[RMDB]
RNA sequence: GGGAACGACUCGAGUAGAGUCGAAAACUCCAUGGAGGAAGUUGGAGAGGUGGAAAACAACCCAGUGAGCAAAGCAAUCGCUCGCCACCUGGGCAUUGACAUUUCUGCAGAAGGCCGCCUGGCCAAGCUCCAUAUACAAAUUCGUUUGUAUAUGGAGAAAAGAAACAACAACAACAAC
Reactivity to 2A3 in 0.01 (KOAc 150mM, MgCl2 10mM, bicine 150mM(pH8.5), 24C), signal-to-noise 4, nucleotides 027 to 126: c010u000c010c000a060u150g060g000a060g060g000a080a070g060u160u070g040g050a030g000a020g040g000u020g020g040a040a050a030a080c030a030a060c000c010c000a000g010u030g030a120g000c030a130a120a010g010c020a060a300u170c200g000c000u000c010g000c010c000a040c020c040u000g000g010g000c040a060u020u050g020a030c020a040u050u080u000c010u070g010c030a060g010a210a040g110g000c050c030g020c100c140u130g010g000c010c010a030a010g020
Reactivity to DMS in 0.01 (KOAc 150mM, MgCl2 10mM, bicine 150mM(pH8.5), 24C), signal-to-noise 9, nucleotides 027 to 126: c060u010c010c030a090u010g010g010a080g010g010a080a070g010u000u000g010g000a040g010a070g010g020u010g000g000a100a040a070a090c110a120a180c010c020c010a040g010u010g000a190g010c020a090a120a120g010c070a130a110u010c210g010c010u010c300g010c020c040a030c220c030u000g000g000g010c050a050u010u000g010a140c060a060u010u000u000c020u000g010c040a060g010a110a110g000g000c020c030g010c090c080u000g010g010c090c060a050a080g000